[RMDB]
RNA sequence: GGGAACGACUCGAGUAGAGUCGAAAACGGGGGUCCAAUCUAAUUCUGCAUAGUGGUUUAAUUAUGUAGUCUCGCUUUUGGACCAGAACAAUCACCAUCCUUUAUUAUCCUUGUGCUUGUGACAAUAACCAGGUGUGGAUUUCGAUCCACACCUGGUAAAAGAAACAACAACAACAAC
Reactivity to 2A3 in 0.01 (KOAc 150mM, MgCl2 10mM, bicine 150mM(pH8.5), 24C), signal-to-noise 1, nucleotides 027 to 126: c050g080g020g000g000g000u020c000c000a000a010u020c000u300a020a020u180u000c000u000g000c000a000u000a000g000u000g230g000u100u300u300a280a030u000u000a000u000g000u000a000g100u000c170u000c050g190c080u000u000u000u000g000g000a000c090c000a000g020a000a080c100a000a160u040c000a000c100c050a070u060c000c030u150u110u110a180u270u000a170u000c010c000u250u000g070u080g000c080u050u190g000u030g080a000c090a160a180u160a100
This 177-nucleotide RNA was probed chemically with 2A3. The reactions ran in a buffer of 150 mM KOAc, 10 mM MgCl2 and 150 mM bicine (pH 8.5), at 24 C. Reactivities are given for positions 27 through 126.